[RMDB]
RNA sequence: GGGAACGACUCGAGUAGAGUCGAAAAGAAGAGAACUUCGGUUCUCUUCAAAGCAGUUACCCACGCCAAGAAAUCCCGGAACAUUGGCUCGUUAGCGGGAGAAAACCGGGAAGUUCGCUUCCCGGAACUUAGAUCUCAGGUUCGCCUGAGAUCUAAGAAAAGAAACAACAACAACAAC
Reactivity to DMS in 0.01 (KOAc 150mM, MgCl2 10mM, bicine 150mM(pH8.5), 24C), signal-to-noise 1, nucleotides 027 to 126: g020a000a010g000a010g000a010a000c000u000u010c230g020g010u000u000c010u000c010u010u000c000a040a050a080g000c100a060g020u000u000a110c050c000c000a130c130g010c070c120a050a140g000a070a100a140u000c010c000c010g020g000a060a030c040a100u000u010g000g050c100u010c130g010u000u000a020g000c010g000g000g000a070g000a080a040a070a140c010c010g000g000g010a010a000g010u000u010c200g010c010u000u000c030c010c000g010g010a000a020
Reactivity to 2A3 in 0.01 (KOAc 150mM, MgCl2 10mM, bicine 150mM(pH8.5), 24C), signal-to-noise 1, nucleotides 027 to 126: g000a000a020g040a010g010a000a000c010u070u130c260g040g000u040u000c010u000c010u000u000c000a010a010a000g060c000a040g050u050u070a170c020c020c000a010c090g040c030c050a110a070g140a090a160a050u000c060c010c050g000g080a000a040c040a120u090u140g190g020c120u030c020g010u020u070a210g100c000g050g010g060a010g040a010a070a010a060c020c000g020g010g010a000a000g000u020u110c180g000c150u010u000c050c000c000g000g010a000a000